[RMDB]
The record gives the reactivity of an RNA of 177 nucleotides to DMS and 2A3.
DMS adducts were read by reverse transcription with MarathonRT.
The 2A3 profile rests on 762 reads.
RNA sequence: GGGAACGACUCGAGUAGAGUCGAAAAGGCCGCCGUACCAAAUUGUACGAGGCCGCACACGCAGAUGUUCGUGGGUCCCUGAAUCACUUUAUUCCUGAGCUCGGCCCCAUUAAUGUUACCACCUGUGCAAAGUAUACGCGUUCGCGCGUAUACUUUGAAAAGAAACAACAACAACAAC
Reactivity to DMS in 0.01 (KOAc 150mM, MgCl2 10mM, bicine 150mM(pH8.5), 24C), signal-to-noise 2, nucleotides 027 to 126: g010g020c010c000g010c300c030g020u000a010c010c170a150a130a190u040u010g010u000a000c010g020a300g010g000c000c010g020c060a080c060a040c060g040c080a130g020a070u010g000u010u000c050g010u000g010g000g020u010c010c020c010u000g000a100a110u010c040a040c050u000u000u000a090u040u000c030c060u000g010a070g010c110u000c040g000g000c070c000c030c020a030u000u010a050a090u010g010u010u010a050c060c020a120c110c040u020g010u010g000
Reactivity to 2A3 in 0.01 (KOAc 150mM, MgCl2 10mM, bicine 150mM(pH8.5), 24C), signal-to-noise 1, nucleotides 027 to 126: g020g000c000c010g060c220c010g070u010a040c000c080a170a290a300u270u240g010u000a000c000g010a010g000g000c010c000g020c010a050c000a000c020g010c000a020g000a240u140g080u120u100c030g000u010g050g010g000u010c030c010c000u000g090a060a130u010c000a050c010u080u240u120a140u140u060c020c000u030g040a030g100c100u020c030g050g030c000c000c000c000a010u050u160a160a000u160g050u070u000a000c020c010a030c000c070u070g040u050g040